[RMDB]
RNA sequence: GGGAACGACUCGAGUAGAGUCGAAAACGCAGAGGGUUCUUAUAACAAAGAACCUAGAUAGCCGCAUCGGUAUUAUAGGAUGUAGUCGGUGAGCCGGAAUGCCUGCAUCGUAAGCCUAUAAGUAAAUUUAAGUGUAAUCACUUCGGUGAUUACACAACAACUCCAUUUCGUUCGCGAAAUGGAGUUGAAAAGAAACAACAACAACAAC
Reactivity to 2A3 in 0.01 (KOAc 150mM, MgCl2 10mM, bicine 150mM(pH8.5), 24C), signal-to-noise 1, nucleotides 027 to 156: c090g010c050a030g050a070g010g010g000u000u010c010u050u100a240u170a210a010c040a070a020a000g000a000a000c000c000u000a010g010a050u010a050g080c030c020g020c040a050u080c050g010g000u020a060u150u060a070u050a060g050g000a040u050g060u050a020g060u090c010g000g000u010g030a010g030c050c000g050g100a140a010u160g050c050c030u020g080c000a010u000c030g050u030a040a020g010c000c000u000a010u020a100a040g110u110a020a110a180u110u180u120a180a030g000u000g000u000a000a000u000c000a000c000u020u030c140g150g000u010g000a000u010u000a000c000a000c000a000a010
Structure probing data (2A3) for a 207-nucleotide construct. The RNA was probed in 150 mM KOAc, 10 mM MgCl2 and 150 mM bicine (pH 8.5) at 24 C. Values cover nucleotides 27 to 156. It was measured as part of the RMDB library M2RFPK.